RNA sequence: GGGAACGACUCGAGUAGAGUCGAAAACAAUUAUGUGAGCCAUCCAACAUCUCCUUUUAGGUUUAAACUAAGCAAACGUUUCUAUUGCAUGCAGUUAAAAUCCUCUACUGAUAACGUUAUCAUUGGUCUUCCCUGGCAGGUUGUAGAUGCUGUGAGGGGAUGCAGUAAUAUUCGUAUUACUGCAUCCAAAAGAAACAACAACAACAAC
Reactivity to 2A3 in 0.01 (KOAc 150mM, MgCl2 10mM, bicine 150mM(pH8.5), 24C), signal-to-noise 2, nucleotides 027 to 156: c030a040a130u220u120a090u240g090u070g040a030g000c020c020a060u060c030c010a000a040c010a090u000c030u050c050c020u100u050u030u230a080g050g000u090u080u170a090a080a050c100u110a110a040g000c050a110a100a080c030g000u010u020u000c020u020a040u000u040g010c000a030u220g000c000a000g010u090u170a040a060a000a040u030c000c010u040c030u060a060c050u070g040a050u060a140a030c040g040u050u100a050u070c030a080u020u120g010g000u000c000u020u030c050c010c000u000g050g000c020a030g000g050u060u050g000u040a030g000a090u110g000c050u040g020u050g050a060g060g070
Reactivity to DMS in 0.01 (KOAc 150mM, MgCl2 10mM, bicine 150mM(pH8.5), 24C), signal-to-noise 2, nucleotides 027 to 156: c080a100a130u020u020a040u010g010u010g000a100g000c020c020a100u000c020c020a080a060c060a040u000c010u000c060c050u000u000u020u020a060g020g010u000u000u000a060a050a060c080u020a080a100g030c050a080a180a090c040g020u020u010u010c010u000a030u000u010g000c010a080u000g000c010a070g000u000u000a000a050a080a070u010c040c030u010c020u000a080c060u000g010a090u000a040a100c080g010u000u010a100u000c080a130u010u030g020g020u000c040u000u010c020c020c030u000g010g020c020a030g020g010u000u000g040u010a070g060a160u010g030c000u000g070u010g010a110g000g010
An RNA of 207 nucleotides, treated with 2A3 and DMS and read out base by base. It was measured as part of the RMDB library OK3TST. 2A3 adducts were read by reverse transcription with SuperScript II with manganese.